[RMDB]
RNA sequence: GGGAACGACUCGAGUAGAGUCGAAAAGCAAGAAAGAAAGACACGAGGGCAGCGAUGACCCGCCGGGCGAUCUGUGGUCGCCAUGUGCCCGGCGUCGAGCAGUGGCGCGCCCGGGCCGUCAGAUCAAAAAACGCCCACUACUUCGGUAGUGGGCGAACAAACGUUAUGACUUCGGUCAUAACGUUUGAAAAGAAACAACAACAACAAC
Reactivity to 2A3 in 0.01 (KOAc 150mM, MgCl2 10mM, bicine 150mM(pH8.5), 24C), signal-to-noise 1, nucleotides 027 to 156: g030c010a050a000g070a120a220a000g030a080a080a010g040a080c030a000c060g050a130g020g030g000c010a020g050c030g060a060u040g020a120c000c000c000g020c010c000g000g010g020c020g050a040u000c050u100g100u080g150g010u090c050g000c100c000a010u060g030u050g000c000c000c000g000g010c010g030u080c020g080a050g000c050a000g030u130g020g040c010g000c000g020c000c050c020g000g030g000c010c000g010u000c020a050g000a130u140c100a040a030a030a020a030a030c020g000c010c000c000a000c000u000a000c010u020u070c070g040g000u000a000g000u000g000g040g000c000g000a000a000